An RNA of 177 nucleotides, treated with DMS and 2A3 and read out base by base. The RNA was probed in 150 mM KOAc, 10 mM MgCl2 and 150 mM bicine (pH 8.5) at 24 C.
RNA sequence: GGGAACGACUCGAGUAGAGUCGAAAAGAUGCGUUCGGCGCAGACCGACGCUCGUGGCAGCACGGCCAGCGUCAUGGUCGCCAUCAACACCGCCAUCAGGAUCUGGGCGAAGUAGGACAGGAAGGCGUAGCGCCAUGAUUUUCGAAUCAUGGCGCUAAAAAGAAACAACAACAACAAC
Reactivity to DMS in 0.01 (KOAc 150mM, MgCl2 10mM, bicine 150mM(pH8.5), 24C), signal-to-noise 2, nucleotides 027 to 126: g000a070u000g010c020g000u000u010c020g020g010c020g030c080a120g000a060c020c030g000a030c050g020c010u010c050g000u010g030g050c160a070g040c020a060c050g020g000c080c050a060g000c070g010u000c060a100u010g030g010u010c020g000c050c050a060u000c100a060a100c110a060c070c000g010c040c040a060u010c060a030g000g010a090u000c080u000g010g010g000c070g010a030a070g000u000a060g010g010a090c060a110g010g000a070a060g010g000c090g000
Reactivity to 2A3 in 0.01 (KOAc 150mM, MgCl2 10mM, bicine 150mM(pH8.5), 24C), signal-to-noise 1, nucleotides 027 to 126: g060a050u050g010c000g060u060u090c130g020g000c020g000c080a060g070a060c000c000g000a000c000g080c010u030c030g090u090g060g050c060a040g000c040a040c080g020g030c050c040a030g010c010g000u020c060a170u200g000g020u020c000g000c000c000a040u100c020a000a020c000a050c070c040g000c020c000a020u050c000a060g000g150a060u090c020u080g010g020g000c030g010a070a010g010u090a010g010g010a020c050a030g060g070a060a060g060g030c050g010